[RMDB]
RNA sequence: GGGAACGACUCGAGUAGAGUCGAAAAGGUAAUUAAUAGAUUAGGUGCAGAUCUAGAUGCGGUGAUCAGAGCCAAUAAUAAUAGAUUACCAAAAAGGUCGGUGAUGUUGAUCGGAAUCGAAAUCUUAAAUACCAUACAAUUUAUGCACGAGCAAGGAACGUGUCAUUACUUUCGAGUAAUGACACGUAAAAGAAACAACAACAACAAC
Reactivity to 2A3 in 0.01 (KOAc 150mM, MgCl2 10mM, bicine 150mM(pH8.5), 24C), signal-to-noise 3, nucleotides 027 to 156: g010g000u020a060a050u100u050a040a140u070a080g060a030u060u050a050g010g060u030g060c060a020g020a040u000c010u080a020g030a110u100g070c070g040g020u080g010a020u050c040a040g060a010g090c040c020a040a060u180a050a020u050a020a010u010a060g040a020u000u030a020c010c000a130a000a020a020a020g040g020u010c020g050g040u020g000a030u050g010u110u030g040a090u060c050g010g030a020a020u030c010g040a130a050a020u060c040u060u150a080a070a030u090a060c010c040a050u070a100c040a100a040u080u160u120a060u160g030c010a000c110g030a030g020c040a030a010g140g010a070
Reactivity to DMS in 0.01 (KOAc 150mM, MgCl2 10mM, bicine 150mM(pH8.5), 24C), signal-to-noise 2, nucleotides 027 to 156: g020g060u010a020a060u000u000a070a130u000a100g020a070u000u000a120g000g070u000g000c000a160g000a070u000c010u000a090g010a070u000g010c120g050g040u000g000a040u020c080a150g010a290g050c020c040a090a110u000a090a060u000a070a140u000a170g010a090u000u000a070c040c020a030a020a050a120a110g000g020u000c080g020g030u020g010a090u000g020u000u000g020a090u000c010g010g000a070a080u000c000g000a080a090a080u000c020u000u000a050a100a160u000a040c060c000a110u000a110c090a030a140u000u010u000a070u020g040c000a050c090g020a110g010c040a090a080g000g000a130
An RNA of 207 nucleotides, treated with 2A3 and DMS and read out base by base.
The DMS profile rests on 2,236 reads.
Source: RMDB library OK3TST, as collected in RNAgym.